[RMDB]
RNA sequence: GGGAACGACUCGAGUAGAGUCGAAAAAAGAUAUGGAGGGAGAGCGAUCUUGGAUUUAUGGGAGGACCGUGGUCGGAAACGACCACUAGUACUCCCAUUGUCAGAUCCCUCUCCCUCCUAAGUCAAAGUAAUAUAGAUACUUCGGUAUCUAUAUUACAAAAGAAACAACAACAACAAC
Reactivity to 2A3 in 0.01 (KOAc 150mM, MgCl2 10mM, bicine 150mM(pH8.5), 24C), signal-to-noise 3, nucleotides 027 to 126: a000a010g070a030u090a020u120g010g000a020g030g000g010a010g000a000g000c020g000a000u000c010u120u230g180g000a060u300u300u190a010u090g000g030g000a010g000g010a000c000c030g010u010g000g000u010c000g000g000a060a080a030c010g010a000c000c010a000c010u010a000g000u000a000c010u000c010c000c000a000u000u000g000u010c000a000g000a000u010c010c000c000u000c000u000c000c000c000u000c000c000u000a000a000g000u000c000a040a030a010
Reactivity to DMS in 0.01 (KOAc 150mM, MgCl2 10mM, bicine 150mM(pH8.5), 24C), signal-to-noise 6, nucleotides 027 to 126: a110a080g000a050u010a300u010g000g010a020g020g000g000a010g010a020g050c300g000a010u000c000u010u020g030g020a020u000u010u000a000u010g000g000g010a020g000g000a100c300c220g000u000g000g010u010c000g020g000a080a100a250c010g020a020c000c000a010c010u000a030g000u000a100c000u000c000c010c000a000u000u000g010u000c000a040g000a010u000c010c170c000u000c000u000c000c000c000u000c000c000u000a010a070g010u000c030a140a090a210
The record gives the reactivity of an RNA of 177 nucleotides to 2A3 and DMS. Reactivities are given for positions 27 through 126. For 2A3, 8,813 sequencing reads were counted. It was measured as part of the RMDB library TTRDES. Reactivities are rounded to 0.1 and cut off at 0 and 3. The reactions ran in a buffer of 150 mM KOAc, 10 mM MgCl2 and 150 mM bicine (pH 8.5), at 24 C.